This 177-nucleotide RNA was probed chemically with DMS and 2A3. Source: RMDB library OK2TST, as collected in RNAgym. DMS adducts were read by reverse transcription with MarathonRT. 2A3 adducts were read by reverse transcription with SuperScript II with manganese.
RNA sequence: GGGAACGACUCGAGUAGAGUCGAAAAUUGUAAGUGGGCUUUCUGAAUUGUUCUACUGGUCACCGGAGAAUUCUGAACUUAAAACACUAAGGCUUGUUCUUGUUUUAUUUUCAUGAUAUCACAGGUCCCGAAUACAUUAGUUCGCUAAUGUAUUCGGAAAAGAAACAACAACAACAAC
Reactivity to DMS in 0.01 (KOAc 150mM, MgCl2 10mM, bicine 150mM(pH8.5), 24C), signal-to-noise 4, nucleotides 027 to 126: u010u010g010u010a060a090g020u010g000g020g020c040u010u000u010c070u000g000a070a070u010u000g010u010u010c030u000a080c050u000g010g010u010c080a060c060c030g010g010a130g010a080a220u000u000c040u010g010a040a030c050u000u000a020a030a040a030c030a090c300u010a090a070g010g010c090u010u000g010u000u000c030u000u010g010u000u000u000u000a010u010u010u000u000c030a050u010g010a030u000a060u000c040a060c130a110g000g000u000c110
Reactivity to 2A3 in 0.01 (KOAc 150mM, MgCl2 10mM, bicine 150mM(pH8.5), 24C), signal-to-noise 2, nucleotides 027 to 126: u130u110g040u130a010a070g030u050g030g040g000c000u060u180u010c040u100g110a100a080u060u060g040u050u050c010u040a080c010u020g060g040u060c020a010c020c000g060g020a060g040a060a050u090u000c010u030g040a020a020c020u030u020a040a020a010a010c050a040c110u080a020a070g040g020c060u090u140g020u090u030c040u020u040g030u010u000u000u020a030u010u000u020u000c020a020u160g030a000u030a010u110c060a040c030a120g000g100u050c000